About this RNA:
Structure probing data (2A3 and DMS) for a 177-nucleotide construct. The reactions ran in a buffer of 150 mM KOAc, 10 mM MgCl2 and 150 mM bicine (pH 8.5), at 24 C. DMS (dimethyl sulfate) methylates the pairing face of unpaired adenines and cytosines. The DMS profile rests on 3,347 reads. The 2A3 profile rests on 8,907 reads.
RNA sequence: GGGAACGACUCGAGUAGAGUCGAAAAGAUAUGGACGCUGUAUGGGAGCUCGCACGUCGGAAACGACGUGAUGAGCAUCGAUCAUACACGGCGUCCUAAGUCAAACCUGACCCUUCGGGGUCAGGAACAUGUCUCAUGUGUUCGCACAUGAGACAUGAAAAGAAACAACAACAACAAC
Reactivity to 2A3 in 0.01 (KOAc 150mM, MgCl2 10mM, bicine 150mM(pH8.5), 24C), signal-to-noise 2, nucleotides 027 to 126: g000a000u030a010u080g000g000a000c010g030c050u090g000u030a010u010g010g020g000a040g000c000u000c010g040c010a000c010g000u000c020g010g000a020a010a000c010g000a000c000g010u010g000a030u050g010a000g000c000a040u280c010g000a010u010c000a010u020a010c050a030c140g070g010c000g010u000c000c000u010a000a000g000u020c010a080a050a150c000c000u010g000a000c000c010c000u020u090c300g100g000g000g000u000c000a000g010g010a010a010
Reactivity to DMS in 0.01 (KOAc 150mM, MgCl2 10mM, bicine 150mM(pH8.5), 24C), signal-to-noise 2, nucleotides 027 to 126: g000a030u000a030u020g010g000a010c000g010c000u010g000u000a020u000g030g000g010a000g040c000u010c000g020c000a010c010g010u000c000g000g010a020a000a040c000g010a010c000g040u000g000a010u000g010a010g020c000a210u000c230g000a030u010c000a000u000a010c050a220c180g000g000c000g000u000c010c000u000a000a070g010u000c000a140a110a200c000c000u000g000a010c000c000c010u000u010c250g040g010g000g000u000c000a000g000g000a090a130